An RNA of 177 nucleotides, treated with 2A3 and DMS and read out base by base. For 2A3, 5,077 sequencing reads were counted. For DMS, 3,110 sequencing reads were counted. For DMS the reverse transcriptase was MarathonRT. Reactivities are given for positions 27 through 126. The reactions ran in a buffer of 150 mM KOAc, 10 mM MgCl2 and 150 mM bicine (pH 8.5), at 24 C.

[RMDB]
RNA sequence: GGGAACGACUCGAGUAGAGUCGAAAAGUCGUCGCUACGGCGCCGAAAUGAAUUACCGCGCCAAGCCUCUAAACCGGCCAUUAAUAAGUCAUAGGGGCUGGUGAAACGGAGCUGGCGGCCAGAAUUCGCAUAUCGUAGGAUUCGUCCUACGAUAUGCAAAAGAAACAACAACAACAAC
Reactivity to 2A3 in 0.01 (KOAc 150mM, MgCl2 10mM, bicine 150mM(pH8.5), 24C), signal-to-noise 5, nucleotides 027 to 126: g090u040c010g010u020c010g000c040u050a050c200g060g000c000g000c020c010g040a080a050a060u160g020a010a020u020u010a080c020c000g010c010g000c000c010a040a040g010c020c000u000c010u040a070a120a040c030c000g010g030c000c000a030u120u120a110a140u200a200a040g180u140c090a090u110a110g130g000g000g000c010u010g000g000u020g010a100a030a020c090g010g010a010g010c010u020g000g000c000g010g000c040c010a100g020a050a040u050u040c020
Reactivity to DMS in 0.01 (KOAc 150mM, MgCl2 10mM, bicine 150mM(pH8.5), 24C), signal-to-noise 3, nucleotides 027 to 126: g000u010c030g000u000c020g000c030u050a110c190g020g030c000g010c030c040g010a040a100a040u070g000a000a010u000u000a040c260c020g010c000g020c000c000a030a120g030c060c040u000c000u020a020a210a000c020c040g010g020c000c000a070u010u000a080a060u040a070a250g020u050c180a140u000a140g000g000g000g060c000u030g010g000u010g000a020a140a060c190g020g000a060g000c000u000g000g010c000g000g020c120c020a090g000a000a010u000u010c000